[RMDB]
RNA sequence: GGGAACGACUCGAGUAGAGUCGAAAAUACUUAGUACGCGCGUAGUUGCAGGCAUUCCGGGUGCAGCAACUGACGCGGAAGACUUUUCCCAGAGUGUGCGCUUCAACCGGCGUGCUGAGUAGUGCACGAAUUGCACGUACGUUCGCGUACGUGCAAAUGCAGAAAUAUCUUUCGAGAUAUUUCUGCAAAAAGAAACAACAACAACAAC
Reactivity to DMS in 0.01 (KOAc 150mM, MgCl2 10mM, bicine 150mM(pH8.5), 24C), signal-to-noise 3, nucleotides 027 to 156: u010a080c040u000u000a050g010u000a100c000g040c020g030c050g040u000a030g030u000u000g020c000a160g020g020c000a040u000u000c020c300g000g040g150u000g000c030a300g000c000a020a030c000u000g010a020c030g010c020g010g000a130a140g000a090c110u000u000u000u000c010c000c010a260g000a130g030u000g030u010g020c030g020c020u000u000c030a080a070c110c070g040g030c130g000u000g030c000u000g000a090g010u000a040g040u000g000c010a070c040g000a100a190u010u000g010c010a000c000g020u000a000c000g020u000u010c300g010c030g030u000a000c010g000u010g010c000a000a020a070
Reactivity to 2A3 in 0.01 (KOAc 150mM, MgCl2 10mM, bicine 150mM(pH8.5), 24C), signal-to-noise 4, nucleotides 027 to 156: u120a010c010u010u040a000g010u010a020c030g010c010g020c030g070u010a010g000u010u010g000c050a120g100g000c010a030u060u070c140c210g210g040g010u020g000c010a010g000c000a010a000c010u090g130a030c010g000c020g010g000a010a010g080a050c020u100u120u050u020c010c000c000a020g010a030g040u140g000u010g010c030g020c030u100u070c070a090a100c100c050g070g000c030g020u050g000c000u010g000a020g010u070a010g020u010g000c010a010c010g030a070a090u030u020g000c000a000c000g000u000a010c010g000u010u060c160g000c000g150u000a000c000g000u000g000c000a010a000a000
Overview
The record gives the reactivity of an RNA of 207 nucleotides to DMS and 2A3. For DMS the reverse transcriptase was MarathonRT. The data come from the RNA Mapping Database (RMDB), library M2RFOK. Reactivities are given for positions 27 through 156.